[RMDB]
RNA sequence: GGGAACGACUCGAGUAGAGUCGAAAAGCCGCCAUCGCGUAAACAGGAUUGUCACCACGAACGGGCGUAUCAGCGGCGUACACGGCGAUGUGCUCGCACCUUCAUCCGUCGAGCGGGGACAGCCCUAGACCAUAAUGAGUUUCGACUCAUUAUGGUCAAAAGAAACAACAACAACAAC
Reactivity to DMS in 0.01 (KOAc 150mM, MgCl2 10mM, bicine 150mM(pH8.5), 24C), signal-to-noise 6, nucleotides 027 to 126: g000c030c030g020c030c030a060u010c070g010c070g020u000a060a090a100c170a050g000g000a080u010u000g010u010c030a050c010c020a100c040g010a130a040c070g000g000g010c060g010u000a020u010c120a160g010c040g010g010c060g010u010a050c040a050c050g010g010c120g000a100u000g020u000g010c020u000c010g010c030a090c130c100u000u000c070a070u000c050c060g000u000c040g010a120g010c030g000g010g000g000a050c040a060g000c020c010c030u010a140
Reactivity to 2A3 in 0.01 (KOAc 150mM, MgCl2 10mM, bicine 150mM(pH8.5), 24C), signal-to-noise 7, nucleotides 027 to 126: g040c000c020g000c020c010a130u110c050g020c040g130u100a050a110a080c060a070g000g030a040u050u030g030u030c020a020c060c000a030c040g060a130a030c020g030g010g000c020g010u030a050u110c050a040g040c010g060g000c050g000u020a020c060a010c030g250g000c070g150a190u050g020u030g040c030u020c020g010c010a080c000c010u080u070c030a060u040c010c000g030u050c020g030a060g060c090g010g000g010g000a010c010a010g020c000c000c000u020a030

An RNA of 177 nucleotides, treated with DMS and 2A3 and read out base by base. It was measured as part of the RMDB library OK2TST. For 2A3 the reverse transcriptase was SuperScript II with manganese. Conditions: 150 mM KOAc, 10 mM MgCl2 and 150 mM bicine (pH 8.5), 24 C. For DMS the reverse transcriptase was MarathonRT. The 2A3 profile rests on 15,190 reads.